RNA sequence: GGGAACGACUCGAGUAGAGUCGAAAAGGAGGGAAGGCUGGAGUUUCACCAGCGAAGGCUGCUCAGCCGAUUUCGCAUUUCAACGCUUUCACGGCGAGCAGAGAAAGCGAAAGCGAAGCCUCCGAAAGAUGCGUGACUAGUUCGCUAGUCACGCAUCAAAAGAAACAACAACAACAAC
Reactivity to 2A3 in 0.01 (KOAc 150mM, MgCl2 10mM, bicine 150mM(pH8.5), 24C), signal-to-noise 2, nucleotides 027 to 126: g000g020a000g020g010g110a070a090g190g000c010u030g010g060a080g060u050u150u080c090a090c000c000a000g020c030g010a040a000g080g030c010u030g020c100u040c080a020g000c000c000g000a000u040u010u000c010g000c030a170u010u140u140c090a080a070c090g010c020u060u090u110c080a050c050g040g000c010g080a010g050c020a000g040a000g010a010a030a000g010c000g020a040a000a010g060c090g030a000a010g030c040c000u000c000c000g010a010a000a000
Reactivity to DMS in 0.01 (KOAc 150mM, MgCl2 10mM, bicine 150mM(pH8.5), 24C), signal-to-noise 2, nucleotides 027 to 126: g000g000a000g010g000g000a070a060g050g010c000u000g030g000a100g030u000u000u010c070a240c110c040a090g010c000g010a050a100g020g000c010u000g010c120u000c030a040g010c000c000g000a090u030u000u000c030g010c000a140u030u000u010c170a080a110c090g000c000u000u010u030c080a110c100g000g030c110g000a010g000c050a040g000a300g000a020a040a080g030c000g000a040a030a050g000c050g000a060a050g000c000c000u000c000c000g010a010a070a060
This 177-nucleotide RNA was probed chemically with 2A3 and DMS. Values cover nucleotides 27 to 126. Conditions: 150 mM KOAc, 10 mM MgCl2 and 150 mM bicine (pH 8.5), 24 C.